[RMDB]
RNA sequence: GGGAACGACUCGAGUAGAGUCGAAAAGGGUACCCAUUGCUCCAUCACCGAUCAGAACGCGAUUUUUCAUAGCGUCGAGAAAUGCAGUUUUAAAUUGGGGCGUGGCAGUAUUCAUCAAAUAGACAGCCCCUUCUCCCCAAUUCGUUGGGGAGAAGGGAAAAGAAACAACAACAACAAC
Reactivity to DMS in 0.01 (KOAc 150mM, MgCl2 10mM, bicine 150mM(pH8.5), 24C), signal-to-noise 1, nucleotides 027 to 126: g000g000g040u000a000c000c000c000a030u010u010g030c020u000c040c020a000u020c110a140c070c030g020a090u000c000a040g060a300a010c010g010c000g000a230u000u000u000u000u040c150a100u020a220g000c020g000u010c020g010a300g000a010a050a080u000g000c080a010g000u000u000u000u000a000a080a130u020u030g010g000g000g000c000g020u000g030g020c070a150g000u000a040u000u000c010a070u010c080a030a050a070u000a100g000a050c160a080g000c070
Reactivity to 2A3 in 0.01 (KOAc 150mM, MgCl2 10mM, bicine 150mM(pH8.5), 24C), signal-to-noise 2, nucleotides 027 to 126: g040g000g000u000a000c050c000c000a030u040u300g010c010u010c010c000a040u100c110a020c050c040g050a090u040c030a030g060a030a000c000g020c030g050a060u000u000u000u200u270c050a080u170a160g040c050g060u040c060g030a000g020a030a060a000u090g040c070a040g000u040u050u030u220a090a190a110u090u030g000g000g030g010c010g000u020g010g000c030a020g050u020a000u000u040c030a090u050c010a010a050a050u040a020g110a030c040a090g060c000
This 177-nucleotide RNA was probed chemically with DMS and 2A3. DMS adducts were read by reverse transcription with MarathonRT. For 2A3, 1,081 sequencing reads were counted. Conditions: 150 mM KOAc, 10 mM MgCl2 and 150 mM bicine (pH 8.5), 24 C.